[RMDB]
RNA sequence: GGGAACGACUCGAGUAGAGUCGAAAAGAUAUGGAUCCCUACUUUCAACAGCGUCAUAUCGGAAACGAUAUAAGACGACAUGAAAGCAGGGAUCCUAAGUCAAAACAGUGUCCUUCGGGACACUGAACGUGUAAAAGUAGUUCGCUACUUUUACACGAAAAGAAACAACAACAACAAC
Reactivity to DMS in 0.01 (KOAc 150mM, MgCl2 10mM, bicine 150mM(pH8.5), 24C), signal-to-noise 6, nucleotides 027 to 126: g000a020u000a150u010g000g010a020u000c000c000c000u000a030c000u000u000u000c000a090a070c210a240g000c010g010u000c010a130u000a000u010c000g010g010a070a050a060c010g020a000u000a000u000a130a200g010a010c010g000a010c070a300u020g010a010a000a000g020c020a000g010g000g000a000u000c000c000u000a000a060g000u010c010a100a070a110a200c010a010g010u000g000u000c000c000u010u010c200g010g010g000a010c000a010c000u000g000a030a070
Reactivity to 2A3 in 0.01 (KOAc 150mM, MgCl2 10mM, bicine 150mM(pH8.5), 24C), signal-to-noise 8, nucleotides 027 to 126: g010a010u020a020u050g000g000a000u000c010c010c000u000a020c010u030u050u050c220a300a170c080a250g030c000g010u010c010a010u000a010u010c000g000g000a010a020a000c000g000a000u000a000u020a080a110g010a000c010g070a030c060a290u300g000a010a000a000g010c020a010g000g030g000a000u000c000c000u000a010a000g000u000c000a000a010a090a140c010a010g000u000g000u000c010c000u040u060c300g150g000g000a000c000a000c000u000g000a040a020